Structure probing data (DMS and 2A3) for a 177-nucleotide construct.

RNA sequence: GGGAACGACUCGAGUAGAGUCGAAAACGGACUUAGCCAUUCGGGGAGGAUCUCCUGGAGAUAAUAAAGACCCGGCAUAUAUUGAGGAUGGACCAGUUCUUGGAAUGGCUAUCUAGGAGCAUGGUUCCGUUAGGUGUAGUUUCGACUACACCUAACGAAAAGAAACAACAACAACAAC
Reactivity to DMS in 0.01 (KOAc 150mM, MgCl2 10mM, bicine 150mM(pH8.5), 24C), signal-to-noise 5, nucleotides 027 to 126: c050g000g000a060c140u000u000a050g010c020c020a230u000u000c030g010g020g000g010a100g000g000a080u000c040u000c020c060u000g010g000a080g020a110u000a050a100u000a050a120a140g000a130c050c020c020g000g000c140a080u010a070u010a090u000u000g010a100g000g010a110u010g010g010a020c000c010a040g000u000u000c010u000u010g000g010a020a030u000g010g000c040u010a040u000c010u000a020g000g000a030g010c030a090u000g010g000u010u000c020
Reactivity to 2A3 in 0.01 (KOAc 150mM, MgCl2 10mM, bicine 150mM(pH8.5), 24C), signal-to-noise 4, nucleotides 027 to 126: c010g030g030a010c030u090u110a020g000c010c000a060u070u060c030g000g030g010g000a050g090g040a080u020c020u020c060c070u050g130g040a060g020a050u130a150a040u080a070a260a040g040a060c000c000c000g040g010c080a050u170a020u030a080u210u200g070a070g070g040a050u090g010g000a000c000c000a010g010u010u010c000u040u010g020g010a040a040u030g050g000c030u040a020u030c010u010a010g020g000a010g020c050a190u020g000g000u030u000c010

High 2A3 reactivity points to a flexible backbone, as in loops and unpaired stretches.